RNA sequence: GGGAACGACUCGAGUAGAGUCGAAAAGAAAUAAUGGAGUUCAAUAAGCACCUUGAGAUAUCUAACGUUGAUGAAUCUGUGCAAGAGUAUCUACGAACUUCACAAACACUAUAUCGAAAGGUGUAAAGGCAUAAGAAUACUUCGGUAUUCUUAUGCCAAAAGAAACAACAACAACAAC
Reactivity to DMS in 0.01 (KOAc 150mM, MgCl2 10mM, bicine 150mM(pH8.5), 24C), signal-to-noise 2, nucleotides 027 to 126: g030a100a060a080u040a060a180u000g000g010a250g030u010u020c010a110a080u020a100a090g010c000a000c000c000u000u000g000a300g000a000u010a000u010c210u000a070a130c060g000u010u000g020a100u010g000a000a030u000c040u000g030u010g000c160a000a060g000a110g100u000a040u020c080u000a070c150g010a020a080c070u020u000c090a040c060a070a060a030c070a110c100u000a030u000a040u000c000g000a180a010a000g000g010u000g010u000a030a030a110
Reactivity to 2A3 in 0.01 (KOAc 150mM, MgCl2 10mM, bicine 150mM(pH8.5), 24C), signal-to-noise 3, nucleotides 027 to 126: g040a000a060a040u200a040a060u150g060g030a160g010u100u010c050a010a170u060a220a070g010c000a000c000c000u030u000g030a020g000a020u030a000u020c090u070a120a080c060g040u030u060g010a020u010g010a040a060u040c030u040g100u070g120c070a030a000g040a030g010u030a040u040c060u030a080c060g010a070a060c000u090u030c030a050c010a100a050a000c050a000c040u090a010u000a000u070c010g020a090a010a000g000g000u030g010u010a030a000a000
Structure probing data (DMS and 2A3) for a 177-nucleotide construct. The RNA was probed in 150 mM KOAc, 10 mM MgCl2 and 150 mM bicine (pH 8.5) at 24 C.